[RMDB]
RNA sequence: GGGAACGACUCGAGUAGAGUCGAAAAUAAGAUGCGUUCGCGCAUCUUAAAAAAGAUAUGGACCGUCUUUGGCAGGAGAUCCGUAUCGGAAACGAUACGAAGAUCGCGAAACUGCGACGGUCCUAAGUCAAAAAAACGUGCGUUUCGACGCACGUAAGUGUUCUAGGUACUUCGGUACCUAGAACACAAAAGAAACAACAACAACAAC
Reactivity to 2A3 in 0.01 (KOAc 150mM, MgCl2 10mM, bicine 150mM(pH8.5), 24C), signal-to-noise 2, nucleotides 027 to 156: u090a000a000g000a000u000g010c020g000u030u150c250g000c000g000c070a010u010c000u000u000a010a000a000a000a010a000g000a010u010a000u010g000g000a010c000c000g040u020c080u300u280u180g120g000c010a010g000g050a080g000a010u000c020c000g000u000a000u000c000g010g020a000a000a000c000g000a010u010a010c020g020a180a080g010a010u010c000g020c030g160a160a130a010c000u010g010c000g020a000c000g000g000u000c000c000u000a000a000g000u000c000a000a080a000a000a040a000a040c000g010u000g010c010g020u020u140u200c290g080a030c020g000c040a010c000g000u010a040a000